[RMDB]
Structure probing data (DMS and 2A3) for a 207-nucleotide construct. It was measured as part of the RMDB library M2RFPK. The reactions ran in a buffer of 150 mM KOAc, 10 mM MgCl2 and 150 mM bicine (pH 8.5), at 24 C. For DMS the reverse transcriptase was MarathonRT.
RNA sequence: GGGAACGACUCGAGUAGAGUCGAAAAUGUCGGCAAGCGCUAUAUAUGGACACUUACGAAGGGUUUUGGUUGUUUUGUAUCUCAAGCCGACUUUGAGUAUUUGAGGAAAAUACGACAGAAAAAACAAAUAGACCGGUAUCCUUCGGGAUACCGGUAAACAGCAUUAUAGUUUCGACUAUAAUGCUGUAAAAGAAACAACAACAACAAC
Reactivity to DMS in 0.01 (KOAc 150mM, MgCl2 10mM, bicine 150mM(pH8.5), 24C), signal-to-noise 2, nucleotides 027 to 156: u010g000u010c000g100g070c040a160a070g010c040g040c050u000a090u010a180u010a110u000g040g000a110c010a030c010u000u020a080c080g000a140a110g000g020g030u000u010u010u000g010g030u000u010g010u000u000u010u000g010u010a060u000c040u000c040a090a200g010c020c010g020a070c000u000u020u020g010a300g020u000a010u000u000u000g030a210g000g000a170a030a030a080u010a040c000g020a210c120a120g010a010a050a090a090a080a070c050a050a070a110u010a130g010a040c030c000g020g010u000a010u000c000c000u000u000c300g070g010g010a020u000a000c030c000g020g010u000a000a040
Reactivity to 2A3 in 0.01 (KOAc 150mM, MgCl2 10mM, bicine 150mM(pH8.5), 24C), signal-to-noise 1, nucleotides 027 to 156: u060g010u000c010g010g010c020a010a040g010c100g080c190u120a100u010a030u030a070u240g070g010a020c040a020c050u120u140a020c080g110a100a040g050g050g000u020u020u070u090g090g000u000u030g010u020u030u030u020g020u020a040u000c070u000c090a040a060g010c000c020g010a020c090u040u030u020g050a000g020u010a010u000u040u070g060a140g050g110a010a010a010a010u020a000c000g020a020c020a030g130a000a130a000a030a000a000c060a000a060a020u120a050g080a010c000c000g000g000u000a000u000c000c000u000u020c080g000g020g010a000u000a000c000c000g010g000u000a000a000